[RMDB]
RNA sequence: GGGAACGACUCGAGUAGAGUCGAAAAGAUGCCAGACAAGCCUUUGAGCUUGGCUAUUGUAACUGGUACCAACAAGUGGGAGGUGGUGGUUUUCAAUAUAAUGGAUAAUGUCUUACUAAUACAUACAAGAACAUUGUGGAUUCGUCCACAAUGUUCUAAAAGAAACAACAACAACAAC
Reactivity to DMS in 0.01 (KOAc 150mM, MgCl2 10mM, bicine 150mM(pH8.5), 24C), signal-to-noise 2, nucleotides 027 to 126: g000a150u000g000c020c030a030g000a130c030a000a000g020c000c010u000u000u020g020a110g000c060u000u000g010g030c120u010a070u020u010g010u010a070a110c030u010g000g020u000a050c050c050a060a090c140a120a160g000u000g000g000g000a180g010g010u000g000g000u000g000g010u000u000u000u000c030a090a050u010a060u020a050a110u000g000g010a100u000a110a020u000g000u010c030u000u010a150c110u000a060a050u010a050c100a110u000a080c230a070
Reactivity to 2A3 in 0.01 (KOAc 150mM, MgCl2 10mM, bicine 150mM(pH8.5), 24C), signal-to-noise 1, nucleotides 027 to 126: g040a040u160g000c020c000a010g010a080c010a010a020g040c010c000u140u210u290g040a040g070c010u000u020g020g000c050u140a070u200u060g040u030a090a030c010u000g030g090u040a050c010c010a100a090c050a190a160g110u080g040g050g110a210g000g000u080g020g050u070g020g040u020u020u060u080c050a030a010u150a010u010a230a150u100g070g000a010u010a110a030u240g000u060c010u020u040a050c020u130a020a070u080a160c070a000u110a010c020a030
Source: RMDB library OK2TRN, as collected in RNAgym. Chemical mapping of a 177-nucleotide RNA with DMS and 2A3. For DMS the reverse transcriptase was MarathonRT.